[RMDB]
RNA sequence: GGGAACGACUCGAGUAGAGUCGAAAAUGGGCAAAUCAUCGUUGUGACACCGGGGGAAGAAGCCAUUUAGGUGCUCAGAAGGGAGGCUGGAAUUCAGAGCAGGACUGGACGUGCCCCACGACGGUGGGUUCCUUAUGCACUUCGGUGCAUAAGGAACAAAAGAAACAACAACAACAAC
Reactivity to DMS in 0.01 (KOAc 150mM, MgCl2 10mM, bicine 150mM(pH8.5), 24C), signal-to-noise 3, nucleotides 027 to 126: u010g000g000g010c060a110a120a110u010c050a040u000c030g010u000u000g010u000g010a130c130a050c060c040g000g030g010g000g010a090a070g010a100a140g040c020c040a100u010u010u000a050g030g030u000g020c070u000c070a060g020a080a100g000g000g020a050g020g010c020u020g010g000a090a060u010u010c100a070g010a090g010c070a070g010g000a080c060u000g000g000a060c070g020u010g000c050c020c030c010a030c040g000a080c090g010g030u010g000g000
Reactivity to 2A3 in 0.01 (KOAc 150mM, MgCl2 10mM, bicine 150mM(pH8.5), 24C), signal-to-noise 2, nucleotides 027 to 126: u040g000g030g020c030a000a060a080u100c030a010u040c040g040u010u020g040u020g030a020c010a020c070c030g000g010g010g030g020a090a090g040a050a030g060c000c000a030u060u040u090a080g000g030u040g010c010u030c050a050g050a130a050g040g020g010a040g050g000c070u070g010g060a040a030u090u010c010a030g010a030g050c030a020g060g020a030c020u050g020g010a010c020g060u080g020c000c020c000c020a010c010g070a020c040g000g000u020g020g040